An RNA of 177 nucleotides, treated with 2A3 and DMS and read out base by base. Conditions: 150 mM KOAc, 10 mM MgCl2 and 150 mM bicine (pH 8.5), 24 C. For 2A3 the reverse transcriptase was SuperScript II with manganese. Source: RMDB library OK1LIB, as collected in RNAgym. 2A3 is a SHAPE reagent: it acylates the 2'-hydroxyl of flexible nucleotides of all four kinds. DMS adducts were read by reverse transcription with MarathonRT. High DMS reactivity at an A or C suggests that its Watson-Crick edge is free.
RNA sequence: GGGAACGACUCGAGUAGAGUCGAAAAACUCGGAAGGAAACGUGAACCUCACGCGAUCGGUGGAAUCAAUCUCGCUACGGACCCGAGGGCGCCACUGAGCACCGACAACUCCGUCACACUGGAUUGACAACUCUGUCGGGUUCGCCCGACAGAGUUGAAAAGAAACAACAACAACAAC
Reactivity to 2A3 in 0.01 (KOAc 150mM, MgCl2 10mM, bicine 150mM(pH8.5), 24C), signal-to-noise 2, nucleotides 027 to 126: a000c010u010c020g010g020a030a030g010g010a070a090a020c000g030u030g050a120a090c000c040u030c000a040c030g060c050g010a010u000c030g100g020u020g030g040a060a070u050c000a070a070u000c010u050c210g030c020u040a050c040g020g010a080c070c030c010g020a050g010g040g000c050g000c080c040a100c100u110g020a060g000c040a060c010c000g020a080c010a060a050c040u010c010c020g100u110c030a000c000a000c070u010g000g040a080u100u040g060a000
Reactivity to DMS in 0.01 (KOAc 150mM, MgCl2 10mM, bicine 150mM(pH8.5), 24C), signal-to-noise 1, nucleotides 027 to 126: a110c030u000c030g000g030a190a010g000g000a050a110a030c160g000u010g070a140a240c080c040u040c110a090c000g000c040g070a010u010c060g000g070u060g060g000a000a100u100c050a050a070u000c020u000c060g080c090u000a050c000g030g000a160c000c050c000g010a240g010g010g000c080g010c010c000a050c000u000g010a030g000c000a120c000c000g000a060c120a050a210c090u020c000c050g020u010c060a100c090a170c080u000g020g010a060u000u020g020a120